[RMDB]
RNA sequence: GGGAACGACUCGAGUAGAGUCGAAAAAGUAUGGCAAGGCCGUGUGGAGCAUCUGGAACUCUUAUAAUUGCUGGAGGAAAUGAAUAAUGCUACAGUUACUUUUCAAAAGUUUGACACAGUCUCAUAAAGUUAAACAUAUCUUAGUACAUCAGCCAGCGUUUUCACUACCAUUCGUGGUAGUGAAAACAAAAGAAACAACAACAACAAC
Reactivity to DMS in 0.01 (KOAc 150mM, MgCl2 10mM, bicine 150mM(pH8.5), 24C), signal-to-noise 1, nucleotides 027 to 156: a070g020u030a060u000g000g060c060a090a100g010g030c040c020g040u000g030u010g000g000a060g000c030a080u000c050u000g010g000a090a060c050u000c050u020u000a170u000a090a070u020u000g030c060u010g010g030a100g000g010a110a100a130u000g010a090a140u000a030a030u000g000c000u000a060c100a050g000u000u000a030c060u000u000u020u000c070a060a100a100a160g010u030u010u040g010a070c040a050c000a170g030u000c060u020c010a080u000a060a110a110g030u000u000a060a060a100c070a090u000a060u000c000u000u000a110g030u000a100c030a060u010c050a070g010c050c030a060g000c140
Reactivity to 2A3 in 0.01 (KOAc 150mM, MgCl2 10mM, bicine 150mM(pH8.5), 24C), signal-to-noise 3, nucleotides 027 to 156: a020g060u090a010u050g000g020c050a030a020g040g000c030c000g050u060g020u010g090g000a050g000c020a060u070c050u020g000g030a070a020c020u000c020u090u090a090u060a260a090u110u090g000c010u020g000g020a030g000g030a090a110a100u080g010a030a040u100a090a030u100g030c020u030a030c020a020g040u050u030a060c030u130u050u030u080c020a110a130a040a030g000u050u050u100g020a020c020a010c010a170g100u000c030u010c070a030u120a090a050a040g020u040u110a020a070a000c000a050u100a020u040c010u020u010a000g050u040a030c010a080u080c000a020g030c030c000a010g010c000
The record gives the reactivity of an RNA of 207 nucleotides to DMS and 2A3. It was measured as part of the RMDB library OK3TST. The reactions ran in a buffer of 150 mM KOAc, 10 mM MgCl2 and 150 mM bicine (pH 8.5), at 24 C. DMS adducts were read by reverse transcription with MarathonRT.